[RMDB]
RNA sequence: GGGAACGACUCGAGUAGAGUCGAAAAAUCGAUCGAUGCCAGUUCCGGCCAGAUGGCGAUCAGGCGGUCCAGAUUGAUAUCGGGAUAGGAAAGCAGAUCAUAGGCGGAGCGGCGAACACCGUCCUGAUAGUCGUAUCAGUUUCGACUGAUACGACUAAAAAGAAACAACAACAACAAC
Reactivity to DMS in 0.01 (KOAc 150mM, MgCl2 10mM, bicine 150mM(pH8.5), 24C), signal-to-noise 3, nucleotides 027 to 126: a060u010c030g010a030u010c030g010a290u000g010c020c010a150g040u000u000c020c000g040g010c000c010a100g010a100u000g000g020c060g020a090u010c020a090g000g030c090g010g000u010c010c020a100g010a030u000u000g020a130u000a070u000c020g010g000g010a030u000a080g010g010a080a070a240g010c010a050g010a040u000c020a100u000a130g010g010c030g010g010a060g010c030g020g000c010g010a030a120c220a050c030c020g010u000c010c030u000g000a100
Reactivity to 2A3 in 0.01 (KOAc 150mM, MgCl2 10mM, bicine 150mM(pH8.5), 24C), signal-to-noise 2, nucleotides 027 to 126: a000u020c000g000a000u000c020g000a000u130g000c010c020a050g020u010u010c040c000g020g130c010c030a060g020a150u060g090g010c070g000a030u020c010a010g150g030c030g040g010u000c020c020a010g010a040u060u090g200a030u080a010u290c040g000g020g020a010u040a070g090g080a060a010a010g030c030a010g010a080u030c000a130u140a070g020g020c000g000g040a000g030c020g020g010c010g000a030a000c040a020c020c000g020u060c000c000u030g040a060